[RMDB]
This 177-nucleotide RNA was probed chemically with DMS. The DMS profile rests on 857 reads.
RNA sequence: GGGAACGACUCGAGUAGAGUCGAAAAGAUAUGGAGCUAGAAUUCGCCCACUGAUAAGGAGAAGUAUGGUCGGAAACGACCAUACUUCUCCUUGUUUGGUGGGAACUACGAACUAGCUCCUAAGUCAUCUACUUCCUACGUUCGCGUAGGAAGUAGAAAAAGAAACAACAACAACAAC
Reactivity to DMS in 0.01 (KOAc 150mM, MgCl2 10mM, bicine 150mM(pH8.5), 24C), signal-to-noise 1, nucleotides 027 to 126: g000a030u020a300u010g000g020a010g020c000u010a000g000a130a300u000u000c020g030c000c000c000a020c030u010g000a010u000a000a000g000g000a020g070a020a010g020u000a000u000g010g010u020c000g000g020a110a080a210c000g010a000c020c000a010u000a000c000u000u000c000u000c010c000u000u000g000u020u000u020g060g010u000g010g020g000a040a030c200u070a300c020g010a020a090c000u000a000g000c010u010c000c000u000a020a050g020u000c080a300